[RMDB]
RNA sequence: GGGAACGACUCGAGUAGAGUCGAAAACAACUUCAGGAUGUCACUCUGGAGUUAAGAGGUGCUUUUUUAGACCAUUGCUUCAAAGAACUCUAUGAGAUAUUGGAGCAUUGCGGCAUUGACACAGAAGCUAACACCAAUCCUUCGGGAUUGGUGUUAGAAAAGAAACAACAACAACAAC
Reactivity to DMS in 0.01 (KOAc 150mM, MgCl2 10mM, bicine 150mM(pH8.5), 24C), signal-to-noise 2, nucleotides 027 to 126: c090a010a020c010u020u010c010a040g000g000a130u010g010u000c190a210c120u000c010u000g010g000a010g010u000u000a050a120g010a100g030g030u010g010c040u000u000u010u000u000u000a170g000a130c150c010a020u000u000g010c030u000u000c010a010a050a140g000a110a220c030u010c000u080a130u000g000a040g010a140u060a080u010u000g030g000a020g010c010a020u000u000g000c050g020g030c020a040u000u000g000a100c140a070c100a110g000a070a060g000